This 177-nucleotide RNA was probed chemically with 2A3 and DMS. The reactions ran in a buffer of 150 mM KOAc, 10 mM MgCl2 and 150 mM bicine (pH 8.5), at 24 C. It was measured as part of the RMDB library OK2TST. For 2A3 the reverse transcriptase was SuperScript II with manganese. For 2A3, 1,005 sequencing reads were counted. For DMS the reverse transcriptase was MarathonRT.

RNA sequence: GGGAACGACUCGAGUAGAGUCGAAAAUGGUUUUCCAAGCCUCUCUGGAGGACAGUGCCUGCCUGACAAUCCCUCCAAAAGACGUGUGCUGCUGUUUGUAGAAGUCGCUGGCACCAUGCUGCCAUGGACACUCUAAGGGUUUCGACCCUUAGAGUGUAAAAGAAACAACAACAACAAC
Reactivity to 2A3 in 0.01 (KOAc 150mM, MgCl2 10mM, bicine 150mM(pH8.5), 24C), signal-to-noise 1, nucleotides 027 to 126: u040g000g050u000u110u080u070c010c000a040a000g050c020c000u060c060u040c110u150g050g020a010g000g040a080c020a020g060u070g050c020c000u020g010c030c000u000g010a010c000a060a130u060c000c030c000u000c030c040a100a060a040a040g080a000c010g080u070g030u070g080c030u000g050c040u040g050u160u120u060g040u050a020g000a100a000g020u050c040g000c100u070g010g000c050a010c060c020a020u120g000c050u020g000c030c000a000u050g030g000
Reactivity to DMS in 0.01 (KOAc 150mM, MgCl2 10mM, bicine 150mM(pH8.5), 24C), signal-to-noise 3, nucleotides 027 to 126: u010g030g010u000u000u010u010c020c030a130a200g000c010c010u000c030u000c130u020g000g010a040g000g000a070c080a100g010u000g020c020c020u000g000c090c030u010g000a060c110a100a140u010c050c010c000u030c050c060a050a070a100a080g000a060c080g000u000g020u000g030c030u000g000c020u000g000u000u000u010g000u000a090g010a100a070g010u000c060g000c070u000g000g020c040a050c040c070a060u000g020c090u010g010c030c020a050u000g010g020